[RMDB]
RNA sequence: GGGAACGACUCGAGUAGAGUCGAAAAAGACCAAAACUGAAAACGGAAGGCAAUCCUUCCACGACGAUACUUACUUUCCUUUGAUCGUCGUUACUACUGGCAUAGCCACAAAGGAGAACAAACAUGAGCGCGGACACUGACUUCGGUCAGUGUCCAAGCAGGACCCAGUGUUCGCACUGGGUCCUGCAAAAGAAACAACAACAACAAC
Reactivity to 2A3 in 0.01 (KOAc 150mM, MgCl2 10mM, bicine 150mM(pH8.5), 24C), signal-to-noise 2, nucleotides 027 to 156: a000g080a050c070c020a120a070a030a090c100u140g090a080a020a020a110c070g000g000a000a030g010g000c080a030a170u260c010c010u000u000c000c000a000c000g000a000c000g000a000u090a180c020u060u030a030c010u050u060u110c000c010u000u000u060g010a000u000c000g000u000c000g000u020u030a030c020u020a040c020u010g020g000c030a240u100a130g020c030c030a030c040a040a030a020g040g010a030g020a110a030c050a040a090a030c080a120u230g070a070g110c170g000c060g000g000a000c000a000c000u000g000a000c000u020u100c260g050g010u000c000a010g000u000g000u010c000c000a000a000